[RMDB]
RNA sequence: GGGAACGACUCGAGUAGAGUCGAAAAAUGAUCACCGCGUCCGAUGCGGAAGUUCGUGCUUCCGUCGAACGCGAAAGUCGGACGGCGGCCAUGAGUCGCAACGCAAAGCCGCGGCAAGUGGAGUUAGAAAAGCGUUUGAAGUUCGCUUCAAACGCAACUUUCAUUCCAUCUUCGGAUGGAAUGAAAGAAAAGAAACAACAACAACAAC
Reactivity to 2A3 in 0.01 (KOAc 150mM, MgCl2 10mM, bicine 150mM(pH8.5), 24C), signal-to-noise 2, nucleotides 027 to 156: a000u190g010a030u120c050a010c130c010g000c000g000u000c000c020g000a000u030g020c020g020g060a050a010g060u120u300c210g090u300g080c000u000u010c000c000g020u000c040g020a110a020c100g000c000g110a020a010a000g010u010c000g000g000a000c040g100g020c020g010g040c010c000a040u050g010a000g000u030c000g000c030a080a080c050g000c220a130a020a180g070c050c040g000c020g000g000c000a020a020g010u050g030g020a060g030u040u060a030g060a020a090a000a020g000c000g010u000u000u000g000a010a010g010u020u060c160g020c070u000u020c010a020a000a000c000g010c000a000a000
Reactivity to DMS in 0.01 (KOAc 150mM, MgCl2 10mM, bicine 150mM(pH8.5), 24C), signal-to-noise 1, nucleotides 027 to 156: a080u000g020a040u000c000a140c040c010g010c000g010u000c000c010g070a070u000g040c030g050g020a020a010g030u000u010c300g020u000g010c000u000u000c020c060g080u000c010g080a000a080c070g020c110g010a020a060a090g020u010c040g010g060a110c000g010g010c060g020g000c010c000a050u010g010a300g020u020c020g010c010a020a000c010g050c020a240a100a300g000c020c020g000c020g030g000c010a050a300g040u000g040g010a210g020u020u000a130g010a060a100a070a140g000c000g000u000u000u000g000a010a030g040u000u000c300g010c010u000u010c000a000a040a040c000g010c010a020a010